This 177-nucleotide RNA was probed chemically with DMS. High DMS reactivity at an A or C suggests that its Watson-Crick edge is free. The RNA was probed in 150 mM KOAc, 10 mM MgCl2 and 150 mM bicine (pH 8.5) at 24 C. For DMS the reverse transcriptase was MarathonRT. For DMS, 1,667 sequencing reads were counted.
[RMDB]
RNA sequence: GGGAACGACUCGAGUAGAGUCGAAAACCAUAGGAUUUCGAUCCUAUGGCCUGCUAUGUCGCGUAAUAGCUUUUGGACUCUACUUGGGUCGUUCCCACGCGAUGGGGACCGGUUUCGACCGGUCCAACGCUCAUGAGUGAUUCGUCACUCAUGAGCGAAAAGAAACAACAACAACAAC
Reactivity to DMS in 0.01 (KOAc 150mM, MgCl2 10mM, bicine 150mM(pH8.5), 24C), signal-to-noise 1, nucleotides 027 to 126: c000c000a000u000a000g010g000a010u000u020u010c220g000a010u000c000c000u010a000u010g000g020c300c110u000g000c000u000a020u000g000u010c180g030c300g020u010a060a010u010a000g010c020u000u000u000u000g000g000a050c000u000c000u000a000c000u000u000g000g000g000u000c000g000u000u000c000c000c000a010c050g010c060g000a090u030g010g010g000g000a010c050c000g010g000u000u000u020c160g020a010c020c000g010g010u000c000c000a000a040